[RMDB]
RNA sequence: GGGAACGACUCGAGUAGAGUCGAAAAGUGCCUCCGUUUCCCCUUCUGUAGAAUGGAGGUAAUAACCCUGGCUACCUCACAGGCUGUAGUGAUGAGCAAGCAAGUUAAUCCACAUGAAGGGCUGCACGAUCGGGGACAAGUUCGCUUGUCCCCGAUCAAAAGAAACAACAACAACAAC
Reactivity to DMS in 0.01 (KOAc 150mM, MgCl2 10mM, bicine 150mM(pH8.5), 24C), signal-to-noise 1, nucleotides 027 to 126: g050u000g020c110c020u010c020c020g010u000u000u010c100c000c020c150u000u010c090u020g010u040a040g000a060a020u010g010g030a000g000g030u000a000a000u010a080a160c020c020c010u000g000g030c090u010a150c020c040u000c010a060c020a130g000g020c110u020g010u000a000g090u000g000a070u020g010a100g000c000a020a110g020c060a160a050g010u020u010a030a140u000c020c060a130c090a130u020g020a050a020g000g000g020c220u000g000c100a130c190